[RMDB]
RNA sequence: GGGAACGACUCGAGUAGAGUCGAAAAGCUCUGACUUCCAGAUAGUAAAGCGUUGACGCUAGAAUCCGCCGCAACUGAGCGCGAUAAAGCCGCAGAUCGGCUACAUAAUCAAGUAGGUCUACAGCGCGUGCCAUCACUAUUUCGAUAGUGAUGGCACAAAAGAAACAACAACAACAAC
Reactivity to DMS in 0.01 (KOAc 150mM, MgCl2 10mM, bicine 150mM(pH8.5), 24C), signal-to-noise 2, nucleotides 027 to 126: g020c010u000c050u000g020a200c050u010u000c040c080a070g020a040u000a040g030u000a040a170a150g000c000g040u000u000g010a090c080g000c010u000a160g000a190a060u000c020c070g000c020c050g000c110a090a070c160u000g060a190g010c020g010c120g020a060u030a050a100a070g010c000c020g000c060a080g010a050u000c020g010g000c020u020a080c150a060u000a090a060u000c130a020a050g000u010a050g040g000u000c030u000a160c090a040g020c060g030c160
Reactivity to 2A3 in 0.01 (KOAc 150mM, MgCl2 10mM, bicine 150mM(pH8.5), 24C), signal-to-noise 1, nucleotides 027 to 126: g000c020u000c030u020g120a120c030u100u000c120c000a040g070a250u110a040g140u090a000a150a050g020c000g010u000u120g080a040c090g000c040u020a060g030a020a030u040c020c030g000c020c000g050c030a030a090c100u090g020a040g060c050g000c000g000a000u070a040a070a040g030c030c030g000c050a000g030a150u110c000g010g000c010u030a030c010a050u220a050a040u170c040a040a030g030u010a020g140g000u000c000u040a030c010a030g060c030g010c010